Notes:
Source: RMDB library OK3TST, as collected in RNAgym. An RNA of 207 nucleotides, treated with DMS and 2A3 and read out base by base. For 2A3, 3,748 sequencing reads were counted. The RNA was probed in 150 mM KOAc, 10 mM MgCl2 and 150 mM bicine (pH 8.5) at 24 C. Reactivities are given for positions 27 through 156.
[RMDB]
RNA sequence: GGGAACGACUCGAGUAGAGUCGAAAACUACGCAAUAUGAUCACAAAGAAAGCUGUAAUGGUUUAUAUUACCAGGGUUCUUGUUAUAUAUUACAUUCAGACUACCAGUUAUUCUCGGAUGCUAAAGCAAAUUGCACUGUGGAAUCAUCAACACUACCCAGAUAAUAUCGAUUCGUCGAUAUUAUCUGAAAAGAAACAACAACAACAAC
Reactivity to DMS in 0.01 (KOAc 150mM, MgCl2 10mM, bicine 150mM(pH8.5), 24C), signal-to-noise 2, nucleotides 027 to 156: c060u000a090c070g000c050a040a070u000a040u010g010a150u000c070a120c060a070a150a140g000a100a080a110g000c080u000g010u000a080a080u000g000g030u010u010u010a050u010a050u020u000a050c080c070a040g010g020g020u000u000c030u000u000g000u000u000a110u010a100u000a070u010u000a040c000a080u000u000c020a160g020a050c030u000a080c010c030a210g020u000u000a050u000u010c010u010c010g040g010a080u010g000c040u000a070a070a150g000c050a020a070a100u010u000g010c030a060c080u000g020u010g010g010a100a130u000c040a080u000c040a050a070c030a050c030u010a090c120c050
Reactivity to 2A3 in 0.01 (KOAc 150mM, MgCl2 10mM, bicine 150mM(pH8.5), 24C), signal-to-noise 6, nucleotides 027 to 156: c030u110a030c050g000c050a040a080u100a080u200g080a090u140c060a040c050a090a130a090g100a100a120a020g050c030u070g050u280a090a020u030g000g040u040u120u040a040u010a020u050u070a020c010c040a020g130g070g070u260u170c000u020u030g010u060u020a030u000a010u000a010u060u100a030c010a020u000u040c010a020g060a090c030u050a050c040c030a050g030u090u050a060u140u040c030u030c020g040g020a050u040g020c020u090a090a040a030g010c020a060a080a070u110u090g020c020a010c050u030g020u070g050g040a040a040u040c010a020u030c030a070a090c020a030c120u080a050c020c040